[RMDB]
Conditions: 150 mM KOAc, 10 mM MgCl2 and 150 mM bicine (pH 8.5), 24 C. Chemical mapping of a 207-nucleotide RNA with 2A3 and DMS. The 2A3 profile rests on 2,031 reads. 2A3 adducts were read by reverse transcription with SuperScript II with manganese. DMS adducts were read by reverse transcription with MarathonRT.

RNA sequence: GGGAACGACUCGAGUAGAGUCGAAAACAGCUAGUAAAUGACACAACAGAUGUUCAAAUCUAGGUCUAUCUGAAUGUGCUUUCCAUUCUCUUUGUCCAUUAUUUCCCAAUAAGUCUCUUUUACAAACUAUUUUGAUCUGUAAUGUUUUCAAUGGACACAUUAUGAUCCCGUUCGCGGGAUCAUAAUGAAAAGAAACAACAACAACAAC
Reactivity to 2A3 in 0.01 (KOAc 150mM, MgCl2 10mM, bicine 150mM(pH8.5), 24C), signal-to-noise 5, nucleotides 027 to 156: c030a000g120c080u110a010g040u130a050a130a160u140g080a060c010a010c010a150a080c030a060g040a120u060g020u160u100c050a110a140a130u110c100u120a100g120g020u030c030u060a040u010c020u040g060a170a090u070g010u010g030c020u070u100u020c050c000a060u160u020c050u000c020u080u040u030g010u000c010c010a020u030u040a030u070u110u050c000c010c060a020a090u120a150a050g070u020c030u050c030u140u150u150u160a130c070a070a170a060c040u080a180u100u170u080u150g050a060u040c020u000g030u090a050a090u040g070u050u060u050u090c040a020a040u040g010g010a010c010a000
Reactivity to DMS in 0.01 (KOAc 150mM, MgCl2 10mM, bicine 150mM(pH8.5), 24C), signal-to-noise 2, nucleotides 027 to 156: c070a140g020c070u000a140g040u010a040a060a100u000g010a120c040a090c020a080a300c070a060g020a060u000g010u000u000c070a070a090a100u000c080u000a100g000g010u000c050u010a040u000c050u010g020a040a080u000g040u000g000c060u000u020u000c050c010a130u000u000c010u000c020u010u000u000g040u010c010c000a050u000u000a120u000u000u020c020c000c010a120a140u000a120a150g010u000c030u000c050u030u000u020u000a100c030a060a050a050c030u000a110u010u000u000u010g010a060u000c020u000g010u010a040a100u000g010u000u000u000u000c130a040a050u000g000g020a010c000a150